[RMDB]
RNA sequence: GGGAACGACUCGAGUAGAGUCGAAAACGGUCAAGGCUCCCGGCUUCGGCGACCGCCGCAAGGCGAUGCUGCAGGAUAUGGCCAUUCUCACCGGUGGUCAGGUGAUCAGCGAAGAGGUCGGCCUGACAGGCUUUUGCCCAUUCGUGGGCAAAAGCCUAAAAGAAACAACAACAACAAC
Reactivity to 2A3 in 0.01 (KOAc 150mM, MgCl2 10mM, bicine 150mM(pH8.5), 24C), signal-to-noise 1, nucleotides 027 to 126: c100g000g000u040c020a000a070g050g020c040u140c070c010c010g020g000c000u120u030c000g000g000c000g120a110c080c000g090c000c000g000c050a190a080g000g000c050g000a060u230g020c020u020g000c010a000g110g180a110u000a060u070g030g040c030c000a010u150u020c100u000c030a080c010c070g070g000u030g000g000u060c060a070g030g020u160g120a190u080c000a000g010c010g120a270a020g020a010g000g030u010c000g000g000c060c000u010g040a070c000

Notes:
Chemical mapping of a 177-nucleotide RNA with 2A3. For 2A3, 412 sequencing reads were counted. Values are in units of 0.01, from 0 to 300, in steps of 10. It was measured as part of the RMDB library OK1LIB.